Notes:
Structure probing data (2A3 and DMS) for a 177-nucleotide construct. The RNA was probed in 150 mM KOAc, 10 mM MgCl2 and 150 mM bicine (pH 8.5) at 24 C. For 2A3 the reverse transcriptase was SuperScript II with manganese. For DMS the reverse transcriptase was MarathonRT. The data come from the RNA Mapping Database (RMDB), library OK2TST.
[RMDB]
RNA sequence: GGGAACGACUCGAGUAGAGUCGAAAAUCGACCGGCCACGGGUCCACGAGCACACCGUCGAUGUAGAGACCGGGCGCGUAGCCGUCGACGUUGAGCGGCCCGCAGAUGUGGUUGCCGUGGUAGCGGCCUGAUGUUGGACUUUCGAGUCCAACAUCAGAAAAGAAACAACAACAACAAC
Reactivity to 2A3 in 0.01 (KOAc 150mM, MgCl2 10mM, bicine 150mM(pH8.5), 24C), signal-to-noise 2, nucleotides 027 to 126: u090c000g070a040c010c000g020g010c000c010a020c020g000g010g030u010c000c020a000c000g060a050g000c020a010c000a010c110c000g040u070c040g010a080u080g070u200a090g070a000g060a160c060c160g100g060g020c080g000c080g040u030a020g050c030c000g010u040c010g010a050c030g050u020u110g060a080g100c000g070g000c010c070c040g000c040a070g010a270u230g050u040g020g000u030u080g220c000c000g000u000g000g040u010a060g130c010g000g010c010
Reactivity to DMS in 0.01 (KOAc 150mM, MgCl2 10mM, bicine 150mM(pH8.5), 24C), signal-to-noise 2, nucleotides 027 to 126: u010c050g030a120c040c000g010g000c000c020a030c010g010g050g030u000c020c020a040c010g010a190g020c050a120c120a090c060c060g020u000c030g010a070u000g010u020a120g010a160g000a080c080c120g040g000g010c090g000c140g010u010a070g020c070c040g030u000c030g000a030c040g000u000u000g000a130g040c020g010g030c040c060c060g010c080a100g020a120u020g000u000g010g010u000u010g030c000c000g010u000g010g010u010a070g010c020g010g010c080